[RMDB]
RNA sequence: GGGAACGACUCGAGUAGAGUCGAAAAUGUACACGGCAAGUCGGCACAACACCGGACUCGCGGUGAGCGAUGCAGCGUAGCUAAGGCUACGCAGCUGCUGUGCGGAUGGCUAGCAAAGGCUAGCCUAAAAUGCGAUGCAUUUCGAUGCAUCGCAUUUAAAAGAAACAACAACAACAAC
Reactivity to DMS in 0.01 (KOAc 150mM, MgCl2 10mM, bicine 150mM(pH8.5), 24C), signal-to-noise 3, nucleotides 027 to 126: u010g000u000a130c030a020c010g010g000c040a080a070g020u010c040g030g000c070a060c110a130a150c070a030c010c000g020g000a100c160u010c090g010c000g000g030u020g010a090g010c030g020a040u000g020c050a080g000c010g000u000a030g000c010u000a110a180g010g040c010u000a000c000g000c010a010g040c000u000g010c030u020g000u000g000c020g000g000a130u010g000g000c010u000a000g000c010a080a100a090g010g000c020u000a010g000c000c000u000a020
Reactivity to 2A3 in 0.01 (KOAc 150mM, MgCl2 10mM, bicine 150mM(pH8.5), 24C), signal-to-noise 4, nucleotides 027 to 126: u110g010u000a020c010a000c030g020g000c020a030a110g010u020c030g100g020c040a010c020a230a030c000a040c020c010g090g130a230c080u110c120g160c020g000g030u070g040a030g010c020g040a050u100g010c040a010g010c010g020u000a000g000c000u070a150a080g220g000c000u010a000c000g000c000a000g000c000u010g000c020u020g000u010g000c030g040g040a120u100g000g010c000u000a010g000c030a210a100a040g230g000c000u010a000g000c000c000u010a000